[RMDB]
RNA sequence: GGGAACGACUCGAGUAGAGUCGAAAAAGUGUCGGGAGCUGUGAAACCAGUUGAUUUUGAUACUAAAUGGGCUUCACCAGAAUUCCAUAUUCCGGAAACUCCGGUUACCGUUCAAAGUGACAUGUGAUCAUAGGGAUGCGUUCGCGCAUCCCUAUGAAAAAGAAACAACAACAACAAC
Reactivity to DMS in 0.01 (KOAc 150mM, MgCl2 10mM, bicine 150mM(pH8.5), 24C), signal-to-noise 2, nucleotides 027 to 126: a100g000u000g000u000c020g000g000g030a050g010c030u000g000u000g000a090a050a170c110c020a090g000u000u000g000a140u010u010u010u020g000a070u010a020c130u010a030a030a060u000g020g030g000c100u010u010c020a080c240c130a120g000a050a120u000u000c010c020a050u000a100u000u000c040c000g030g000a110a120a170c180u010c040c050g010g000u010u000a020c070c080g010u010u000c130a000a060a110g000u000g000a020c010a060u000g000u020g000a110